[RMDB]
RNA sequence: GGGAACGACUCGAGUAGAGUCGAAAAGAUAUGGACGACCAAGACAUGCGAGAUCAUCGGAAACGAUGACCUCGCAACAGCUUGAGUCGUCCUAAGUCAAACACAAACAGCUUCGGCUGUUUGUGAACCGUCUUCUUUUGUUCGCAAAAGAAGACGGAAAAGAAACAACAACAACAAC
Reactivity to DMS in 0.01 (KOAc 150mM, MgCl2 10mM, bicine 150mM(pH8.5), 24C), signal-to-noise 2, nucleotides 027 to 126: g010a030u000a110u020g000g000a020c000g010a020c000c000a010a030g030a000c070a290u020g000c000g020a030g020a040u000c000a020u000c000g080g010a040a020a050c020g000a020u010g010a010c010c000u000c000g020c010a010a020c280a140g000c000u020u020g000a130g000u000c000g030u000c000c000u010a010a080g000u000c020a150a100a300c020a000c010a000a000a000c000a010g010c000u000u030c300g050g010c000u000g000u040u000u000g000u000g020a040a180
Reactivity to 2A3 in 0.01 (KOAc 150mM, MgCl2 10mM, bicine 150mM(pH8.5), 24C), signal-to-noise 1, nucleotides 027 to 126: g000a010u010a000u080g000g000a000c000g000a000c040c030a010a000g050a030c170a250u300g020c030g010a000g010a010u020c000a000u000c000g000g020a010a000a000c010g000a000u000g000a000c000c000u020c020g040c010a000a020c010a000g000c000u000u030g090a060g040u030c010g000u000c000c000u040a000a000g000u000c040a090a090a000c000a000c000a020a000a000c000a000g020c010u110u140c300g300g000c010u000g010u000u000u010g010u000g000a000a020